[RMDB]
RNA sequence: GGGAACGACUCGAGUAGAGUCGAAAAUUUCAGCAUUUUAAGGACGUGCCCGUGAAGUACAAGUACACAAAUCGGACUCCCCAGAUGGUGUUGAACAAGGAGGCUAUAGACUGGUUGAAGGAUCAAAUCUCUCUUCUUGGAGAAUUAAGAUUCACUGCACACACUAAUUCUUCGGAAUUAGUGUGUGAAAAGAAACAACAACAACAAC
Reactivity to DMS in 0.01 (KOAc 150mM, MgCl2 10mM, bicine 150mM(pH8.5), 24C), signal-to-noise 2, nucleotides 027 to 156: u000u000u000c060a060g060c030a070u000u010u000u000a090a160g030g000a080c070g020u000g010c010c030c040g070u010g010a170a090g050u000a070c040a040a100g020u000a090c060a110c060a030a110a110u000c040g000g000a090c020u000c020c010c030c050a190g000a090u010g000g040u000g000u000u010g020a070a060c050a050a110g000g020a100g000g030c070u000a090u000a070g070a110c010u000g000g030u000u020g010a100a110g000g000a070u000c020a050a120a110u000c070u010c010u000c070u000u000c170u000u010g000g000a060g000a060a060u000u010a050a090g010a040u000u010c000a070c050u030g000
Reactivity to 2A3 in 0.01 (KOAc 150mM, MgCl2 10mM, bicine 150mM(pH8.5), 24C), signal-to-noise 2, nucleotides 027 to 156: u060u060u050c040a040g000c010a020u020u040u050u120a080a030g030g020a000c000g010u040g040c000c030c000g020u040g020a060a050g010u050a020c030a070a080g090u080a030c060a020c030a020a120a060u040c010g000g020a020c000u030c010c000c000c000a020g000a080u030g060g000u000g010u050u040g020a030a010c000a050a000g040g000a020g020g000c000u020a010u050a080g030a020c040u010g000g040u080u040g060a110a020g040g000a000u080c030a000a100a040u000c000u010c010u020c030u300u020c030u070u230g070g020a030g010a020a060u060u110a100a060g010a040u050u070c070a020c110u080g010
An RNA of 207 nucleotides, treated with DMS and 2A3 and read out base by base. The RNA was probed in 150 mM KOAc, 10 mM MgCl2 and 150 mM bicine (pH 8.5) at 24 C.